Conditions: 150 mM KOAc, 10 mM MgCl2 and 150 mM bicine (pH 8.5), 24 C. The record gives the reactivity of an RNA of 177 nucleotides to 2A3 and DMS. For 2A3 the reverse transcriptase was SuperScript II with manganese. For DMS, 1,603 sequencing reads were counted. As a SHAPE reagent, 2A3 marks flexible, mostly unpaired nucleotides at the ribose 2'-OH.
[RMDB]
RNA sequence: GGGAACGACUCGAGUAGAGUCGAAAACGAGAGACGAGAGGGUAACUCGUCCGCCGUAAACCCGAGGUUUCCUGGGCAAGGCUAAUCCUCCCAGGGUCAGUCGGGGGCUAAGGCGAGGCCGGAAGGCCGGCAUAUGCGGCUUCGGCCGCAUAUGCCGAAAAGAAACAACAACAACAAC
Reactivity to 2A3 in 0.01 (KOAc 150mM, MgCl2 10mM, bicine 150mM(pH8.5), 24C), signal-to-noise 2, nucleotides 027 to 126: c040g050a010g000a000g000a050c010g020a000g000a000g080g160g030u040a060a100c000u010c000g000u000c000c010g010c000c000g040u070a030a040a040c000c000c000g000a060g020g040u080u120u300c000c000u030g000g030g000c180a090a040g060g000c070u120a040a130u160c000c020u190c000c000c000a000g000g020g000u040c000a020g200u010c000g000g030g000g000g050c060u100a100a100g000g000c000g010a030g050g040c000c000g050g190a070a030g010g040c030
Reactivity to DMS in 0.01 (KOAc 150mM, MgCl2 10mM, bicine 150mM(pH8.5), 24C), signal-to-noise 1, nucleotides 027 to 126: c010g040a080g020a140g000a000c000g000a020g020a240g000g020g000u000a090a050c000u000c000g000u000c000c060g020c020c000g000u000a040a120a010c000c000c000g000a010g000g000u000u000u020c000c000u000g010g000g050c300a200a040g000g000c300u080a220a150u070c030c000u010c000c000c000a000g010g000g020u010c040a030g070u000c030g000g000g000g000g000c110u030a120a220g030g020c000g020a030g000g000c000c000g000g010a090a160g020g000c000
It was measured as part of the RMDB library RFM100.